Annotation:
The record gives the reactivity of an RNA of 177 nucleotides to 2A3 and DMS. Conditions: 150 mM KOAc, 10 mM MgCl2 and 150 mM bicine (pH 8.5), 24 C. The 2A3 profile rests on 1,217 reads. High DMS reactivity at an A or C suggests that its Watson-Crick edge is free.
RNA sequence: GGGAACGACUCGAGUAGAGUCGAAAAUUUUGGGCAGAUAACAACUGUUACGCGUCUUGCCACUGUAUUGUAAACACUACAACAAAUUUUAAGUUUAUUACACCUACGCGACAAGAUGAAUCGGAAAACAUCGUGUUAUCUUCGGAUAACACGAUGUAAAAGAAACAACAACAACAAC
Reactivity to 2A3 in 0.01 (KOAc 150mM, MgCl2 10mM, bicine 150mM(pH8.5), 24C), signal-to-noise 2, nucleotides 027 to 126: u090u060u030u020g030g000g000c010a010g020a030u110a140a000c020a100a050c060u060g020u050u060a080c040g000c010g030u000c010u010u060g000c010c000a040c070u100g020u010a040u060u000g020u010a000a010a020c030a010c120u140a040c010a140a010c050a060a220a080u180u170u070u160a160a000g020u050u020u000a140u020u070a000c000a000c000c000u020a010c060g020c020g020a020c010a020a010g000a010u090g030a060a120u100c060g050g000a000a000a000
Reactivity to DMS in 0.01 (KOAc 150mM, MgCl2 10mM, bicine 150mM(pH8.5), 24C), signal-to-noise 2, nucleotides 027 to 126: u000u020u000u000g020g010g000c030a030g030a040u000a080a060c170a100a080c050u000g020u000u020a100c160g020c100g000u010c020u000u020g000c050c040a080c080u000g020u000a040u030u010g020u000a070a000a060c150a030c110u010a020c150a060a120c210a090a040a220u000u000u000u000a050a080g000u000u010u000a030u030u000a080c050a050c190c080u010a040c090g000c060g010a020c060a030a020g000a030u000g010a090a050u010c140g000g000a090a100a050